RNA sequence: GGGAACGACUCGAGUAGAGUCGAAAAAUACAUACUGACACCGGUUGCUCAACAAGCUGUGUGGGACAAUAGAAUAACAAGGCUGUCAAUUUGAGCUUGACGGCUGCAAACCGAAUGGAGUGAAAUCGUAACCGGACUCACUUCGGUGAGUCCGGAACUUGGAGAAGAAGUUCGCUUCUUCUCCAAGAAAAGAAACAACAACAACAAC
Reactivity to DMS in 0.01 (KOAc 150mM, MgCl2 10mM, bicine 150mM(pH8.5), 24C), signal-to-noise 1, nucleotides 027 to 156: a130u000a050c050a090u000a160c050u000g010a140c000a070c010c000g000g000u010u000g030c060u000c090a070a150c050a050a100g020c050u000g000u000g010u000g040g020g040a020c080a070a140u010a100g010a130a070u000a090a130c060a080a130g000g000c010u000g020u010c000a030a100u000u020u000g000a140g020c260u000u000g010a070c010g010g050c000u010g000c020a100a040a070c030c010g020a130a130u000g000g000a120g030u000g020a130a040a080u000c060g000u010a090a130c010c000g040g000a020c000u000c000a050c020u000u000c300g030g030u000g000a050g010u000c010c000g000g010a000a000
Reactivity to 2A3 in 0.01 (KOAc 150mM, MgCl2 10mM, bicine 150mM(pH8.5), 24C), signal-to-noise 2, nucleotides 027 to 156: a000u100a030c070a050u130a050c000u050g080a030c000a020c030c030g080g020u030u030g000c010u050c070a070a110c030a090a080g000c050u040g040u030g000u060g080g030g060a010c020a010a060u040a100g190a120a040u110a070a050c070a130a000g000g000c010u010g020u020c010a000a010u080u050u190g030a020g090c060u010u010g020a020c000g000g000c020u030g040c010a000a170a000c020c010g090a050a040u150g050g000a030g080u060g060a010a040a130u160c090g010u050a030a030c000c000g000g000a000c000u000c000a000c000u010u030c080g070g000u000g020a000g000u000c020c000g000g010a000a000